Chemical mapping of a 177-nucleotide RNA with DMS and 2A3. For 2A3, 904 sequencing reads were counted. The RNA was probed in 150 mM KOAc, 10 mM MgCl2 and 150 mM bicine (pH 8.5) at 24 C. Reactivities are given for positions 27 through 126. 2A3 adducts were read by reverse transcription with SuperScript II with manganese. For DMS, 934 sequencing reads were counted.
[RMDB]
RNA sequence: GGGAACGACUCGAGUAGAGUCGAAAACAUAAUGGCAUUGUAUGCGACGGUCGGCUUCCAACAGCCGCAGUGUGGCGGCCGGCAGUAGGGAAGACGAAGAAACGAAAUCGCCUUCCGGUGAUGCGUACCCACUGACCUGAUUCGUCAGGUCAGUGGGAAAAGAAACAACAACAACAAC
Reactivity to DMS in 0.01 (KOAc 150mM, MgCl2 10mM, bicine 150mM(pH8.5), 24C), signal-to-noise 1, nucleotides 027 to 126: c030a060u010a110a100u010g020g010c060a020u000u000g110u000a200u000g000c080g000a050c080g000g080u030c000g010g000c020u010u000c020c080a060a130c050a040g010c040c080g030c090a060g010u000g010u000g000g000c010g000g010c000c060g000g010c050a040g000u000a050g010g010g000a010a000g020a010c010g030a070a050g000a120a050a160c250g000a080a130a090u000c010g010c010c020u000u010c040c040g010g030u000g000a000u000g020c030g020u020a120
Reactivity to 2A3 in 0.01 (KOAc 150mM, MgCl2 10mM, bicine 150mM(pH8.5), 24C), signal-to-noise 1, nucleotides 027 to 126: c040a030u300a210a000u180g130g010c010a020u050u050g060u260a030u180g020c080g020a020c020g030g040u020c000g000g030c020u010u000c030c020a080a030c000a130g130c060c070g030c040a010g050u110g050u050g140g000c000g000g000c000c000g000g010c050a050g020u030a000g000g130g000a000a010g030a010c020g030a020a040g030a110a200a020c110g060a150a000a000u030c000g000c000c000u060u000c010c010g120g050u170g020a020u060g020c060g010u140a130